[RMDB]
RNA sequence: GGGAACGACUCGAGUAGAGUCGAAAAGAUACAGUUGCUAUUUUAAAAGGAUUAAGAGAUCGUUACGAAGCACACCAUCGUAUUAAUAUUUCAGACGAAGCUAUUGAAGCAGCUGUUAAAUUAAGUAGCGGGUUAGUGUAUUCGUACACUAACCCGCAAAAGAAACAACAACAACAAC
Reactivity to 2A3 in 0.01 (KOAc 150mM, MgCl2 10mM, bicine 150mM(pH8.5), 24C), signal-to-noise 1, nucleotides 027 to 126: g110a010u250a020c000a020g000u000u000g000c000u070a300u080u160u000u040a060a300a000a000g030g210a200u060u300a070a000g050a000g000a070u080c080g000u000u010a020c100g000a000a000g010c080a050c000a000c110c030a030u040c070g050u040a080u070u170a300a030u060a220u030u110u020c080a020g020a000c050g120a110a030g030c020u130a000u090u150g000a000a000g000c000a000g000c000u000g000u000u000a000a170a000u060u050a090a000g150u070a070